[RMDB]
Chemical mapping of a 177-nucleotide RNA with 2A3 and DMS. The data come from the RNA Mapping Database (RMDB), library OK1LIB. For 2A3, 810 sequencing reads were counted. DMS adducts were read by reverse transcription with MarathonRT. The reactions ran in a buffer of 150 mM KOAc, 10 mM MgCl2 and 150 mM bicine (pH 8.5), at 24 C.

RNA sequence: GGGAACGACUCGAGUAGAGUCGAAAACCGGGUCACGAUCCAUCUCGCGGGGGGUAGUUAUAGCGGAUCAUCGCUCACUGAUGGUGGUGGUUGUGCUACGUUUGUGUCGGUCAGUCGUCGCACCAGCAAUGGCUAGUACCUUCGGGUACUAGCCAUUAAAAGAAACAACAACAACAAC
Reactivity to 2A3 in 0.01 (KOAc 150mM, MgCl2 10mM, bicine 150mM(pH8.5), 24C), signal-to-noise 2, nucleotides 027 to 126: c000c000g030g000g030u050c090a020c070g000a070u000c000c000a040u010c000u010c090g110c040g000g080g020g000g030g040u130a130g040u080u090a070u100a100g040c020g030g000a060u100c000a010u080c000g000c020u050c090a100c030u210g020a170u210g080g000u010g020g030u000g010g090u050u050g070u060g000c010u040a020c100g050u030u130u000g060u050g050u130c020g030g000u110c050a100g010u030c020g020u020c020g050c020a050c020c000a000g000c030
Reactivity to DMS in 0.01 (KOAc 150mM, MgCl2 10mM, bicine 150mM(pH8.5), 24C), signal-to-noise 1, nucleotides 027 to 126: c060c000g000g000g010u020c000a030c110g000a120u000c060c040a020u020c010u000c070g000c000g040g010g050g000g000g030u010a000g000u000u020a210u010a050g020c010g000g000a040u010c090a050u010c000g020c040u000c150a040c150u010g020a050u010g000g000u000g000g040u000g050g010u000u040g040u000g000c010u030a110c050g020u010u010u020g040u040g020u020c020g000g050u050c120a120g000u020c020g030u000c000g000c070a050c030c000a110g000c160